[RMDB]
RNA sequence: GGGAACGACUCGAGUAGAGUCGAAAAGAUAUGGAUCGCUAAGGCUGAUGACCUAUGGCGGACUCGGAAACGAGGAAGCCAUAGCAAGGCCUUACGAUCCUAAGUCAAAGUGGGGUUCGCCCCACAAGAGUACAUCCUAGUUCGCUAGGAUGUACUCAAAAGAAACAACAACAACAAC
Reactivity to DMS in 0.01 (KOAc 150mM, MgCl2 10mM, bicine 150mM(pH8.5), 24C), signal-to-noise 6, nucleotides 027 to 126: g010a030u010a300u000g010g000a010u000c000g020c300u000a000a010g000g010c010u000g010a120u000g000a120c300c010u000a000u000g000g020c010g000g000a300c010u000c000g010g010a090a110a140c000g000a010g000g000a300a240g000c000c000a010u000a000g000c020a040a130g000g000c010c000u000u000a010c010g000a010u000c000c000u000a010a050g010u010c020a090a100a130g010u000g000g000g010g020u000u020c300g000c000c010c000c010a010c010a020a050
Reactivity to 2A3 in 0.01 (KOAc 150mM, MgCl2 10mM, bicine 150mM(pH8.5), 24C), signal-to-noise 3, nucleotides 027 to 126: g020a000u060a030u140g010g000a000u020c020g030c270u020a000a000g010g000c010u020g020a300u130g030a130c010c000u000a000u000g000g000c000g020g060a020c000u010c000g010g020a080a070a050c020g000a000g040g010a010a000g000c000c000a000u010a000g010c010a140a300g010g000c000c000u000u000a000c000g000a010u000c000c000u000a030a020g000u000c050a130a060a070g010u010g000g010g020g020u060u100c250g180c030c000c030c010a000c000a000a020